[RMDB]
Record summary
Structure probing data (2A3 and DMS) for a 177-nucleotide construct. For DMS, 8,704 sequencing reads were counted. The reactions ran in a buffer of 150 mM KOAc, 10 mM MgCl2 and 150 mM bicine (pH 8.5), at 24 C. Reactivities are given for positions 27 through 126. Source: RMDB library M2PK90, as collected in RNAgym.
RNA sequence: GGGAACGACUCGAGUAGAGUCGAAAAAUAAAUAUCAGUUAUAUGACUGACGGAACGUGGAAUUAUCCACAUGAAGUAUAACGAUGACAAUGCCGACCGUCUGGGCGUUGCAUCCGCUCCAAAAAAACAUAAUGCUUUAGUUCGCUAAAGCAUUAUGAAAAGAAACAACAACAACAAC
Reactivity to 2A3 in 0.01 (KOAc 150mM, MgCl2 10mM, bicine 150mM(pH8.5), 24C), signal-to-noise 5, nucleotides 027 to 126: a010u070a020a050a010u240a030u050c010a020g010u030u040a160u040a050u300g110a060c030u030g020a010c010g020g000a100a030c070g010u020g000g050a100a080u300u060a130u270c000c000a000c010a030u080g060a040a010g050u080a050u020a170a010c030g010a020u020g060a050c010a010a010u020g010c000c010g070a100c030c020g110u010c050u050g100g010g000c000g000u010u000g000c010a020u000c020c050g040c020u050c030c000a050a160a040a010a000a010a000
Reactivity to DMS in 0.01 (KOAc 150mM, MgCl2 10mM, bicine 150mM(pH8.5), 24C), signal-to-noise 6, nucleotides 027 to 126: a090u010a060a060a110u010a100u000c010a080g010u000u000a060u000a080u000g010a090c080u000g010a030c040g020g000a150a090c180g010u000g000g000a080a180u010u010a060u000c000c010a000c010a110u010g000a080a110g010u000a030u000a030a050c080g010a010u000g010a080c010a010a020u000g010c000c010g010a090c030c040g000u000c040u010g010g000g010c000g030u000u000g000c010a070u010c030c060g000c060u010c020c030a000a000a040a080a040a040a120